[RMDB]
Annotation: Source: RMDB library OK3TST, as collected in RNAgym. Chemical mapping of a 207-nucleotide RNA with 2A3 and DMS. The RNA was probed in 150 mM KOAc, 10 mM MgCl2 and 150 mM bicine (pH 8.5) at 24 C.

RNA sequence: GGGAACGACUCGAGUAGAGUCGAAAAGCAUCCGACAUGGUGCUGGGAUGCGAAUAUCAGCACAAGGCUUUUGCCGAAUUACACCAGAAGAACGCAUGGCUGGUGAAUCAUCCAUGCAUCGUCUCGUAGAGUCGACGAGACGUAAGAUGUCGACAGACACGAGUGCAUUAUUCGUAAUGCACUCGUGAAAAGAAACAACAACAACAAC
Reactivity to 2A3 in 0.01 (KOAc 150mM, MgCl2 10mM, bicine 150mM(pH8.5), 24C), signal-to-noise 5, nucleotides 027 to 156: g030c000a050u060c040c010g080a050c100a130u090g030g000u020g000c010u030g030g000g030a020u070g000c020g050a060a040u120a040u090c020a020g030c020a030c030a090a090g040g000c040u090u150u300u300g010c020c020g030a030a030u190u100a070c050a020c060c000a010g040a070a020g020a150a000c050g020c060a010u030g030g000c010u010g000g040u070g110a030a090u140c010a010u000c020c010a010u050g000c020a010u080c010g000u010c000u000c000g000u010a040g000a010g100u060c030g010a010c000g000a000g000a010c010g000u020a030a030g050a050u090g030u060c030g020a060c040a060g040a010
Reactivity to DMS in 0.01 (KOAc 150mM, MgCl2 10mM, bicine 150mM(pH8.5), 24C), signal-to-noise 2, nucleotides 027 to 156: g030c030a050u010c020c020g030a060c020a110u000g000g040u010g030c000u000g010g050g010a210u000g040c110g000a090a100u010a080u010c050a060g040c040a060c010a090a100g010g020c000u000u000u010u010g010c020c020g000a080a060u000u000a130c070a110c030c020a130g010a090a070g040a040a120c090g020c030a040u010g020g010c070u010g010g010u000g010a080a110u000c050a060u010c000c000a090u010g020c020a140u020c010g020u010c000u010c020g060u010a070g030a100g000u000c030g010a130c040g030a040g020a010c020g010u000a040a080g000a100u000g030u000c020g020a150c120a150g010a300